Structure probing data (2A3 and DMS) for a 177-nucleotide construct.
RNA sequence: GGGAACGACUCGAGUAGAGUCGAAAAGUCAGUCAACUAGCACCAGGUCCAAAAGCUAGUGACUGACAAAGGACCUGGAGCUCAGAAAAUAAAGUAUCCGAUAAGGAUACAAAAGAAAAGUGAGCAAAAUUUUAGGAUGAUUCGUCAUCCUAAAAUUAAAAGAAACAACAACAACAAC
Reactivity to 2A3 in 0.01 (KOAc 150mM, MgCl2 10mM, bicine 150mM(pH8.5), 24C), signal-to-noise 6, nucleotides 027 to 126: g000u000c010a000g000u020c030a090a060c090u010a000g000c010a040c090c080a080g080g190u120c040c030a110a110a000a010g010c010u020a000g000u000g010a000c000u000g000a000c000a000a030a020g020g010a050c000c000u030g050g090a040g000c000u000c020a020g100a110a100a010a020u140a020a110a020g000u000a000u000c000c010g050a090u120a300a070g000g000a000u000a000c000a000a070a010a000g040a020a060a000a000g060u020g000a000g000c000a050a080
Reactivity to DMS in 0.01 (KOAc 150mM, MgCl2 10mM, bicine 150mM(pH8.5), 24C), signal-to-noise 7, nucleotides 027 to 126: g010u000c000a010g010u000c000a080a040c010u000a000g000c000a160c180c170a130g000g010u040c110c090a120a060a110a100g000c000u000a010g010u000g000a020c010u000g000a000c010a010a090a130g010g020a210c010c000u000g000g010a130g000c000u000c000a020g000a130a100a110a080u010a080a120a200g000u000a000u000c010c000g000a130u060a100a160g000g000a000u000a010c000a020a060a120a120g010a080a080a080a080g010u010g000a010g010c010a060a060
Overview:
The data come from the RNA Mapping Database (RMDB), library OK1LIB. For DMS, 12,838 sequencing reads were counted.